The record gives the reactivity of an RNA of 177 nucleotides to DMS and 2A3. DMS (dimethyl sulfate) methylates the pairing face of unpaired adenines and cytosines. Source: RMDB libraries RFM100 and RFMREP, as collected in RNAgym.
RNA sequence: GGGAACGACUCGAGUAGAGUCGAAAAAGCGUACUACUACGGUAGUACGCAUCAACUAGUUACCGGUAACAAAGGCCCGUGUUGGCCAAGUCUAAAGCAAUUUAAACUAGCUGGAUUAACUGACCAAACAAUGUAAAGACUUCGGUCUUUACAUUGUAAAAGAAACAACAACAACAAC
Reactivity to DMS in 0.01 (KOAc 150mM, MgCl2 10mM, bicine 150mM(pH8.5), 24C), signal-to-noise 7, nucleotides 027 to 126: a090g010c000g000u000a000c000u000a000c000u000a130c200g050g000u010a010g000u000a000c000g020c000a020u020c140a080a110c200u020a030g010u010u000a040c010c000g000g010u000a040a060c100a060a220a220g000g000c010c000c110g010u010g000u030u050g010g010c000c000a010a060g000u000c030u000a010a030a030g010c220a090a100u010u000u000a010a020a020c010u000a120g000c000u000g000g000a120u020u010a010a010c020u000g000a100c020c030a100a090
Reactivity to 2A3 in 0.01 (KOAc 150mM, MgCl2 10mM, bicine 150mM(pH8.5), 24C), signal-to-noise 9, nucleotides 027 to 126: a000g010c000g000u000a000c000u000a000c000u010a010c180g120g000u000a000g000u000a000c000g010c000a000u020c010a000a030c030u100a010g000u010u010a010c000c000g000g030u050a050a040c050a090a100a080g020g020c010c010c030g300u220g080u210u230g000g000c000c010a010a010g010u000c020u050a060a020a020g020c040a100a130u050u060u060a090a060a020c020u020a010g000c010u010g010g000a030u070u040a010a010c010u020g060a040c020c020a070a100